[RMDB]
RNA sequence: GGGAACGACUCGAGUAGAGUCGAAAAGGGAUAACCCCGGGAAACUGGGGAUAAUACCGGAUGGAUCACUAGUGCUGGAAUGCUUGGUGGUCGAAAGGCAACGCCUUUGGAUGGGUCUGCGGCGGAUCUAUCGGGGUUACUUCGGUAACCCCGAUAGAAAAGAAACAACAACAACAAC
Reactivity to 2A3 in 0.01 (KOAc 150mM, MgCl2 10mM, bicine 150mM(pH8.5), 24C), signal-to-noise 1, nucleotides 027 to 126: g040g000g050a030u010a070a100c020c000c020c000g000g000g000a050a020a000c030u020g010g000g000g000a000u050a110a020u020a030c000c000g000g000a050u050g090g000a000u000c010a080c010u000a020g150u010g160c000u020g140g220a200a120u240g000c000u000u000g010g000u000g000g040u030c020g010a030a080a000g060g010c030a130a020c120g010c000c000u040u070u020g040g010a070u070g010g010g010u000c020u020g020c030g000g060c010g050g020a000u000
Reactivity to DMS in 0.01 (KOAc 150mM, MgCl2 10mM, bicine 150mM(pH8.5), 24C), signal-to-noise 1, nucleotides 027 to 126: g060g070g000a050u040a100a110c030c000c040c000g000g000g000a160a120a130c020u000g000g050g000g000a050u040a050a130u020a070c020c000g000g110a300u040g000g000a050u040c040a090c000u020a010g030u070g000c010u020g010g080a060a060u040g000c020u010u010g040g050u040g000g060u000c010g000a010a070a000g000g010c000a080a190c140g030c040c000u000u040u000g000g010a010u000g030g000g040u010c070u000g000c090g010g010c060g000g000a030u000